[RMDB]
RNA sequence: GGGAACGACUCGAGUAGAGUCGAAAAUUUACGGUAUUCGUACCGUAAACGAGCAAGCAAGCAGCGCAACGAGAGAAGACGAUAAUAAGAUCGAGCAUGCUGAUAGUAGGAUCUUCGGAUCCUACAACUCUAUUUGACAGUUCGCUGUCAAAUAGAGAAAAGAAACAACAACAACAAC
Reactivity to 2A3 in 0.01 (KOAc 150mM, MgCl2 10mM, bicine 150mM(pH8.5), 24C), signal-to-noise 5, nucleotides 027 to 126: u010u000u010a000c010g000g000u020a030u010u120c190g040u040a050c000c000g000u000a010a000a000c030g030a040g070c040a090a000g000c030a050a030g010c010a010g030c020g000c070a060a110c090g020a020g010a010g020a220a050g070a050c080g020a040u070a210a040u110a230a070g070a110u040c020g010a020g030c020a020u080g030c030u070g030a070u040a080g010u000a000g000g000a000u000c010u030u050c220g050g010a000u010c010c000u000a000c000a000a000
Reactivity to DMS in 0.01 (KOAc 150mM, MgCl2 10mM, bicine 150mM(pH8.5), 24C), signal-to-noise 4, nucleotides 027 to 126: u000u000u000a000c000g000g000u000a010u010u010c190g050u000a000c000c010g020u000a000a010a040c160g010a110g020c120a070a100g000c090a090a060g010c020a060g000c070g010c080a070a060c070g000a070g010a090g010a080a090g010a090c060g000a060u010a060a100u010a060a090g000a060u000c040g010a100g010c060a080u000g010c050u010g010a090u010a100g010u000a010g010g000a010u000c010u000u000c150g020g000a020u000c000c000u000a000c000a060a130
Notes: An RNA of 177 nucleotides, treated with 2A3 and DMS and read out base by base. Source: RMDB library M2PK50, as collected in RNAgym.